[RMDB]
RNA sequence: GGGAACGACUCGAGUAGAGUCGAAAAGACUUGAUGCAGUGUCGUCUGGCAGGUGUCAGGUUGAAGCCGUGGGCUGUGUGGUCAAGUUCAUGCACGAUGUGAACGCGUGACCAGAUGAUCACGCAUGGGGUGUUGCAACGUUCGCGUUGUAAUACCCAAAAGAAACAACAACAACAAC
Reactivity to DMS in 0.01 (KOAc 150mM, MgCl2 10mM, bicine 150mM(pH8.5), 24C), signal-to-noise 9, nucleotides 027 to 126: g000a050c020u010u000g000a020u010g010c010a060g010u010g020u000c020g020u040c160u040g010g010c010a040g000g010u000g010u000c010a020g000g000u000u000g000a110a080g020c070c030g040u010g000g000g010c050u010g030u000g010u010g000g000u000c020a060a090g000u000u000c010a020u000g000c060a150c150g010a100u020g010u020g000a060a050c070g010c080g010u000g000a030c010c010a040g000a040u010g000a050u010c000a000c000g000c010a060u020g010
Reactivity to 2A3 in 0.01 (KOAc 150mM, MgCl2 10mM, bicine 150mM(pH8.5), 24C), signal-to-noise 9, nucleotides 027 to 126: g040a010c010u020u030g010a010u020g030c050a200g220u010g010u050c080g080u090c150u170g010g000c010a010g050g000u010g010u020c000a010g010g020u020u050g050a050a010g030c050c000g020u050g000g020g000c030u010g010u000g020u020g010g020u030c030a040a030g010u010u010c000a010u040g020c040a030c180g110a170u140g070u060g150a090a010c060g020c090g100u010g000a040c000c000a010g010a060u030g000a010u010c000a000c000g000c010a020u050g010
Chemical mapping of a 177-nucleotide RNA with DMS and 2A3. For DMS, 75,703 sequencing reads were counted. The RNA was probed in 150 mM KOAc, 10 mM MgCl2 and 150 mM bicine (pH 8.5) at 24 C. For 2A3, 42,783 sequencing reads were counted.